[RMDB]
RNA sequence: GGGAACGACUCGAGUAGAGUCGAAAACUGAUUUGACAGUAUUACAGCUGACAUUGAUAAUGACAUAGCUACUACUCCAAUCAGGAUAUAGAUUAUGAAAUUCUUAUUAUUCAUUGAUUUUAUCCAAGAUCUAAUCUAUUAAAAUAUAGCUUGAAAAACUUAGAUUAUCGUUCGCGAUAAUCUAAGUAAAAGAAACAACAACAACAAC
Reactivity to 2A3 in 0.01 (KOAc 150mM, MgCl2 10mM, bicine 150mM(pH8.5), 24C), signal-to-noise 2, nucleotides 027 to 156: c000u000g000a020u050u100u070g050a050c120a020g050u030a040u090u180a070c050a030g000c040u060g050a060c010a050u070u070g120a070u180a220a010u070g030a040c030a090u150a010g000c000u000a020c000u000a000c010u000c000c010a010a000u010c000a020g030g000a000u010a000u010a150g020a010u050u050a010u200g050a070a120a110u180u070c010u030u110a160u090u110a090u300u000c050a040u040u200g050a040u100u220u090u210a090u030c090c000a090a070g060a070u010c000u070a000a000u000c000u050a080u090u150a190a150a180a020u300a050u140a110g010c030u090u110g060a050a050a210a040

The record gives the reactivity of an RNA of 207 nucleotides to 2A3. Reactivities are given for positions 27 through 156. The reactions ran in a buffer of 150 mM KOAc, 10 mM MgCl2 and 150 mM bicine (pH 8.5), at 24 C. For 2A3, 651 sequencing reads were counted. 2A3 is a SHAPE reagent: it acylates the 2'-hydroxyl of flexible nucleotides of all four kinds.